[RMDB]
This 177-nucleotide RNA was probed chemically with DMS and 2A3. For 2A3 the reverse transcriptase was SuperScript II with manganese. Conditions: 150 mM KOAc, 10 mM MgCl2 and 150 mM bicine (pH 8.5), 24 C. Reactivities are given for positions 27 through 126. In probing experiments dimethyl sulfate is read out at A N1 and C N3, which are open when not base-paired. Source: RMDB library OK1LIB, as collected in RNAgym.
RNA sequence: GGGAACGACUCGAGUAGAGUCGAAAAGACGCCUGUGUGGCGAAACGAGCAAUGGAAUAAGCCGCAAUAGAAGAUGAGAUGGAAGCGGCAAGAUAGAAUGCUCGCAAGAAGAUCCAUCUCACAGAGACAUGGUAGGUCGAUUCGUCGACCUACCAUGAAAAGAAACAACAACAACAAC
Reactivity to DMS in 0.01 (KOAc 150mM, MgCl2 10mM, bicine 150mM(pH8.5), 24C), signal-to-noise 2, nucleotides 027 to 126: g000a150c040g000c010c000u000g050u040g010u020g040g000c010g040a040a090a130c040g010a000g000c080a000a040u000g000g000a280a080u190a050a180g040c030c020g000c000a050a160u000a080g020a040a080g000a040u000g010a000g050a020u000g000g050a010a040g010c000g050g060c000a020a010g000a000u020a050g000a090a190u000g030c000u010c080g000c110a100a250g040a210a180g000a260u030c040c000a000u000c000u010c000a000c060a090g010a110g000a200
Reactivity to 2A3 in 0.01 (KOAc 150mM, MgCl2 10mM, bicine 150mM(pH8.5), 24C), signal-to-noise 2, nucleotides 027 to 126: g100a020c000g060c000c000u080g080u070g250u270g150g000c040g000a100a050a000c020g010a000g000c050a040a140u140g080g020a070a130u110a170a020g000c010c030g000c000a010a010u050a090g150a260a010g120a130u100g000a000g030a000u000g000g000a070a120g000c000g020g000c000a000a000g030a000u180a050g150a170a040u030g000c030u080c060g000c000a040a040g120a150a020g090a050u050c000c000a000u000c000u050c000a000c000a020g100a000g040a030